Conditions: 150 mM KOAc, 10 mM MgCl2 and 150 mM bicine (pH 8.5), 24 C.
This 177-nucleotide RNA was probed chemically with 2A3 and DMS.
For 2A3 the reverse transcriptase was SuperScript II with manganese.
It was measured as part of the RMDB library OK1LIB.

RNA sequence: GGGAACGACUCGAGUAGAGUCGAAAACUAUGUACAGACAGUACAGUGGAUAAGGUCUAUCGAUAUCCAACUUUAACAAUGGUACUUGCAGUGGUAUCUAUCAAGAUAGGCAGGCUAUCAUAGAAAGAAGAUGUGUAUUAUUCGUAGUACGCAUCUUAAAAGAAACAACAACAACAAC
Reactivity to 2A3 in 0.01 (KOAc 150mM, MgCl2 10mM, bicine 150mM(pH8.5), 24C), signal-to-noise 3, nucleotides 027 to 126: c010u010a020u040g000u000a010c010a090g200a020c020a010g030u010a000c000a000g010u030g040g000a010u000a040a030g030g010u000c010u020a000u040c000g020a020u000a000u000c010c000a030a040c040u050u020u000a090a010c050a040a040u050g010g000u020a010c000u020u040g010c010a020g020u050g150g000u020a000u000c000u010a090u040c040a070a000g000a030u020a000g030g000c010a000g010g010c010u010a000u020c010a010u010a030g050a020a120a000g160
Reactivity to DMS in 0.01 (KOAc 150mM, MgCl2 10mM, bicine 150mM(pH8.5), 24C), signal-to-noise 9, nucleotides 027 to 126: c020u010a060u010g010u000a010c010a140g010a120c250a140g000u000a000c020a040g010u010g010g000a040u010a040a110g000g010u020c110u020a000u020c000g020a110u010a020u000c010c020a060a140c100u010u000u000a090a110c160a080a050u000g000g000u000a020c020u000u010g000c050a100g010u030g010g010u000a010u000c010u000a090u050c230a070a060g010a030u000a020g000g000c030a030g000g010c210u000a010u000c020a030u000a050g010a070a110a090g010